[RMDB]
RNA sequence: GGGAACGACUCGAGUAGAGUCGAAAACUUUCCAUUCAGCCCAUUGCCGGGCAGGCGUCAGCGUCGUGCCGUACUUCGCCACAUCGCGCGCCAGUGCGAUGGAAAUCUGCGCCGUCUCGAACAGGCACCAUCCCUAAUCAUUCGUGAUUAGGGAUGGAAAAGAAACAACAACAACAAC
Reactivity to 2A3 in 0.01 (KOAc 150mM, MgCl2 10mM, bicine 150mM(pH8.5), 24C), signal-to-noise 6, nucleotides 027 to 126: c010u060u030u030c010c010a030u080u080c040a020g020c010c010c020a080u090u260g110c100c050g030g000g000c030a020g010g000c020g030u130c100a020g010c020g050u080c050g050u080g070c070c020g020u050a090c100u090u130c030g010c040c000a010c000a060u010c010g000c000g000c030g010c060c020a030g040u040g040c020g010a000u010g010g060a060a050a040u050c050u080g040c030g000c020c010g050u020c040u050c070g070a110a030c020a090g020g000c010a020
Reactivity to DMS in 0.01 (KOAc 150mM, MgCl2 10mM, bicine 150mM(pH8.5), 24C), signal-to-noise 6, nucleotides 027 to 126: c190u000u000u000c010c010a140u000u010c100a170g010c020c010c030a120u010u010g010c220c120g020g010g050c000a050g010g010c030g020u010c090a110g020c090g020u000c080g010u000g020c180c050g010u010a100c190u000u000c050g030c150c050a100c010a040u000c020g020c000g000c020g010c080c090a070g020u000g000c080g000a010u000g000g000a050a060a070u020c060u010g020c050g010c020c010g000u010c010u000c070g010a070a080c080a090g020g010c070a270
This 177-nucleotide RNA was probed chemically with 2A3 and DMS.
The 2A3 profile rests on 11,675 reads.
2A3 is a SHAPE reagent: it acylates the 2'-hydroxyl of flexible nucleotides of all four kinds.
Source: RMDB library OK2TST, as collected in RNAgym.
For 2A3 the reverse transcriptase was SuperScript II with manganese.
DMS adducts were read by reverse transcription with MarathonRT.
The RNA was probed in 150 mM KOAc, 10 mM MgCl2 and 150 mM bicine (pH 8.5) at 24 C.